The record gives the reactivity of an RNA of 207 nucleotides to 2A3. Values cover nucleotides 27 to 156.
RNA sequence: GGGAACGACUCGAGUAGAGUCGAAAACGAUCAGUACGUUCGCGUACUGAUCGAAGCUACUGGAGACAGUAGCAAGUCUAAGACCUUGUUAGGCGGAAACAAGGCACAAUGGAGGAAGGCCGGACCUCCAUACUUAGACAACCGCCAACCGGCCAACGGCUAAUGACCAUUUCGAUGGUCAUUAGCCAAAAGAAACAACAACAACAAC
Reactivity to 2A3 in 0.01 (KOAc 150mM, MgCl2 10mM, bicine 150mM(pH8.5), 24C), signal-to-noise 1, nucleotides 027 to 156: c010g000a020u010c000a000g000u010a010c000g030u090u070c220g010c020g120u010a000c000u000g000a000u000c000g000a000a000g000c000u000a000c010u000g010g010a040g000a040c000a000g000u000a000g000c010a000a020g000u000c000u000a010a010g020a130c000c000u000u020g020u020u020a140g120g140c120g060g080a090a050a010c000a000a000g010g020c040a040c060a100a030u010g010g000a000g050g000a060a240g020g000c020c000g080g000a150c010c000u000c000c010a000u030a020c010u010u000a000g010a010c020a070a130c050c070g120c090c040a040a010c000c000g020g000c000c020a010a010c100
Source: RMDB library OK3TST, as collected in RNAgym.
The RNA was probed in 150 mM KOAc, 10 mM MgCl2 and 150 mM bicine (pH 8.5) at 24 C.
For 2A3, 1,064 sequencing reads were counted.